[RMDB]
RNA sequence: GGGAACGACUCGAGUAGAGUCGAAAAGAAACUCGUUUCGCGUUGGAUGCCUAAUUCAAGGAAUUAGCGUGCCUUCAUGCUAAGGGUUUGAUAUCUGCUAAAACCCGGUGCAUUCAUCAAUGCAGGUCUCAUCCAAAUGCCUUCGGGCAUUUGGAAAUCAAAUUUACCGUUUCGACGGUAAAUUUGAAAAAGAAACAACAACAACAAC
Reactivity to DMS in 0.01 (KOAc 150mM, MgCl2 10mM, bicine 150mM(pH8.5), 24C), signal-to-noise 2, nucleotides 027 to 156: g020a160a080a050c060u010c020g000u020u010u010c040g030c170g010u010u000g000g000a040u000g020c050c030u000a050a080u000u000c070a080a150g000g000a090a130u000u000a030g020c020g080u000g010c070c040u000u000c040a080u000g020c030u000a270a190g010g020g010u000u010u000g010a110u010a060u000c060u000g000c070u010a090a060a040a050c010c000c000g020g030u010g020c010a060u000u000c070a070u010c070a050a120u020g000c010a100g000g020u000c080u010c020a100u000c010c010a010a020a010u010g020c000c000u000u000c300g050g010g020c000a000u000u000u000g000g010a010a000a060
Reactivity to 2A3 in 0.01 (KOAc 150mM, MgCl2 10mM, bicine 150mM(pH8.5), 24C), signal-to-noise 3, nucleotides 027 to 156: g030a010a070a010c040u040c050g050u050u070u080c080g020c020g030u020u050g020g030a040u070g010c010c010u020a020a010u040u020c150a250a090g110g040a080a030u000u010a010g020c030g020u040g130c010c020u030u020c010a030u080g000c010u020a020a060g000g010g010u000u010u010g010a010u020a050u040c020u020g010c020u020a000a010a020a050c010c000c020g020g010u030g000c020a080u040u170c020a040u070c060a140a120u130g000c010a000g000g030u010c030u040c070a050u000c000c000a000a000a000u000g000c010c020u020u050c160g030g000g000c000a000u000u010u000g000g000a000a020a000